RNA sequence: GGGAACGACUCGAGUAGAGUCGAAAACUUUGGUCGUGGUCGGAACAGCGCCGUGCACAAGGGGAUCUGCAAAGCACGGCACGUAAGCACUCAGAUGCGAAAGUAGGAACUGCGUUAGGCGUCCAGAAUGUAUAUAAGGCUUCGGCCUUAUAUACAUAAAAGAAACAACAACAACAAC
Reactivity to DMS in 0.01 (KOAc 150mM, MgCl2 10mM, bicine 150mM(pH8.5), 24C), signal-to-noise 9, nucleotides 027 to 126: c030u000u010u010g010g010u000c030g020u010g010g010u000c020g010g010a120a110c090a120g010c080g020c010c000g020u000g020c020a090c140a120a130g000g000g020g010a080u030c030u000g010c110a080a100a110g000c020a020c010g000g010c010a010c060g000u010a080a140g010c050a060c050u010c110a090g010a100u000g010c020g010a060a070a080g000u000a070g000g010a070a090c050u010g010c040g010u010u010a070g010g010c050g010u000c010c030a120g010a120
Reactivity to 2A3 in 0.01 (KOAc 150mM, MgCl2 10mM, bicine 150mM(pH8.5), 24C), signal-to-noise 8, nucleotides 027 to 126: c020u060u030u110g060g010u050c020g030u050g050g040u040c040g030g020a050a060c030a080g040c000g000c030c010g010u020g020c010a080c050a200a100g060g030g030g050a110u080c040u130g040c080a080a050a010g000c010a010c010g010g000c010a000c010g010u030a050a030g010c010a020c020u120c050a060g050a170u070g030c020g050a090a040a020g060u080a040g050g040a080a060c030u050g010c010g040u030u080a050g010g040c010g010u020c000c000a020g090a100